[RMDB]
RNA sequence: GGGAACGACUCGAGUAGAGUCGAAAAACAAAGACAUAUUUCAAAACCAACACAUUGAGCCUAAAGAUUUAUUGCGUUACGAUGACGAGUCUUGUGAAGUAAUGCCAGAAUGCUCCACAAGCACAGCCAUCCUUGUGACAUUCGUGUCACAAGGAUGAAAAGAAACAACAACAACAAC
Reactivity to 2A3 in 0.01 (KOAc 150mM, MgCl2 10mM, bicine 150mM(pH8.5), 24C), signal-to-noise 8, nucleotides 027 to 126: a000c080a000a130a010g170a030c070a040u230a170u120u220u120c090a050a070a050a070c060c020a060a030c040a010c010a130u070u160g050a050g000c010c040u150a110a100a070g050a130u080u160u140a120u140u230g060c040g030u010u030a080c070g040a080u130g100a030c050g030a020g050u010c000u010u030g020u000g010a030a010g010u080a090a070u130g110c040c000a030g030a130a040u120g010c000u000c010c000a010c000a020a010g050c040a000c030a050g040c030
Reactivity to DMS in 0.01 (KOAc 150mM, MgCl2 10mM, bicine 150mM(pH8.5), 24C), signal-to-noise 3, nucleotides 027 to 126: a050c050a050a080a100g000a070c110a020u010a050u000u000u000c120a040a100a040a110c060c070a090a040c110a080c030a010u010u000g000a080g000c020c000u010a040a160a050g010a230u000u020u040a050u010u000g000c160g010u000u000a050c110g030a070u010g010a050c100g010a100g000u020c000u000u000g010u000g000a000a050g010u010a060a060u070g010c030c160a060g030a080a110u000g010c000u020c030c020a000c070a020a000g040c090a040c130a090g030c100
Structure probing data (2A3 and DMS) for a 177-nucleotide construct. For 2A3, 7,040 sequencing reads were counted. The reactions ran in a buffer of 150 mM KOAc, 10 mM MgCl2 and 150 mM bicine (pH 8.5), at 24 C. 2A3 adducts were read by reverse transcription with SuperScript II with manganese. It was measured as part of the RMDB library OK1LIB. Reactivities are given for positions 27 through 126. For DMS, 4,420 sequencing reads were counted.